[RMDB]
Conditions: 150 mM KOAc, 10 mM MgCl2 and 150 mM bicine (pH 8.5), 24 C. An RNA of 177 nucleotides, treated with 2A3 and read out base by base. 2A3 adducts were read by reverse transcription with SuperScript II with manganese. It was measured as part of the RMDB library RFM100. For 2A3, 506 sequencing reads were counted.

RNA sequence: GGGAACGACUCGAGUAGAGUCGAAAAUGAUUCAUAUUGGAUUUGGUCAUUGUAAUAUGUAGAAUAUUUGAUUUUAGUCCCUCAAAAUGAGGACUAAAAUGAAUAUUAUAGGGACCAAUUUCAAUAUAAGAUACGGAGGGUUCGCCCUCCGUAUCUUAAAAGAAACAACAACAACAAC
Reactivity to 2A3 in 0.01 (KOAc 150mM, MgCl2 10mM, bicine 150mM(pH8.5), 24C), signal-to-noise 1, nucleotides 027 to 126: u180g060a080u070u040c020a020u050a040u010u010g000g000a000u000u000u000g000g000u000c030a030u010u010g050u000a000a110u020a120u070g090u120a080g130a230a000u050a130u120u070u170g120a020u010u020u020u000a000g000u050c050c040c000u100c050a100a160a000a000u300g000a030g030g000a000c000u000a000a000a000a000u120g020a010a000u030a000u000u000a050u040a080g060g000g000a000c000c000a000a030u000u000u000c000a000a000u000a000u000